[RMDB]
RNA sequence: GGGAACGACUCGAGUAGAGUCGAAAAAAAGUGUACGAAAGAACAAAGAAGCAAUCUAACCGAGUAGUGAAAUGAUGGCUUCAGUCCAAAAUGGGCAAACACUACAGACGGAGCCAAAGGCAAUUAACAAAGGAUGGUAUUUCGAUACCAUCCUUUGAAAAGAAACAACAACAACAAC
Reactivity to DMS in 0.01 (KOAc 150mM, MgCl2 10mM, bicine 150mM(pH8.5), 24C), signal-to-noise 3, nucleotides 027 to 126: a080a020a060g010u000g030u000a090c050g000a070a090a060g000a070a040c080a060a090a050g020a030a020g000c050a050a070u000c030u000a080a070c070c020g020a120g000u000a060g000u010g000a070a040a040u000g010a070u000g000g040c010u000u010c060a070g020u000c010c030a030a040a090a080u000g010g000g000c060a060a070a080c050a000c030u000a040c090a050g000a100c070g020g000a070g020c030c020a020a030a080g010g020c120a060a060u010u020a060a190
Reactivity to 2A3 in 0.01 (KOAc 150mM, MgCl2 10mM, bicine 150mM(pH8.5), 24C), signal-to-noise 2, nucleotides 027 to 126: a000a000a000g070u040g020u060a020c030g080a160a020a020g030a060a030c010a010a060a020g040a040a010g030c000a020a080u060c030u040a040a000c020c000g060a010g080u120a020g000u070g040a030a140a130u130g040a010u070g080g000c000u040u020c040a010g040u000c040c020a120a220a060a090u080g020g000g000c000a060a060a000c020a050c000u150a010c020a020g140a040c010g000g010a010g060c040c070a030a000a000g010g050c020a050a150u150u070a110a040